[RMDB]
RNA sequence: GGGAACGACUCGAGUAGAGUCGAAAAGAUAUGGAGCCAUCCAUACAUGGAGCAGUUCGGAAACGAACUGAACUACUCUGGUAUGGAGUGGCUCCUAAGUCAAAAUCAGAACGUUCGCGUUCUGAAACCAUAUGUAACCGUUCGCGGUUACAUAUGGAAAAGAAACAACAACAACAAC
Reactivity to DMS in 0.01 (KOAc 150mM, MgCl2 10mM, bicine 150mM(pH8.5), 24C), signal-to-noise 5, nucleotides 027 to 126: g020a050u000a300u010g000g010a000g020c010c010a090u000c000c000a000u010a010c010a090u020g000g000a010g050c000a000g010u000u000c000g010g020a110a130a240c200g020a060a120c010u000g000a030a020c020u030a200c000u000c020u000g010g020u000a000u000g000g000a030g040u000g010g000c000u000c000c000u000a010a070g000u010c040a100a100a120a120u000c000a030g000a010a020c000g040u010u020c290g010c010g020u000u000c000u000g000a010a080a200
Reactivity to 2A3 in 0.01 (KOAc 150mM, MgCl2 10mM, bicine 150mM(pH8.5), 24C), signal-to-noise 5, nucleotides 027 to 126: g020a020u080a040u210g000g010a000g010c000c000a000u000c010c000a000u010a030c120a300u250g030g000a000g030c000a010g000u000u010c020g030g020a120a150a120c060g030a060a030c030u020g000a010a010c020u210a050c000u020c020u030g040g000u010a010u030g010g030a080g110u070g000g030c010u010c000c000u000a010a000g000u000c020a010a010a000a240u040c000a010g010a020a020c010g020u090u100c300g030c000g150u000u000c010u010g000a060a010a000

Conditions: 150 mM KOAc, 10 mM MgCl2 and 150 mM bicine (pH 8.5), 24 C. An RNA of 177 nucleotides, treated with DMS and 2A3 and read out base by base. Values cover nucleotides 27 to 126. Values are in units of 0.01, from 0 to 300, in steps of 10.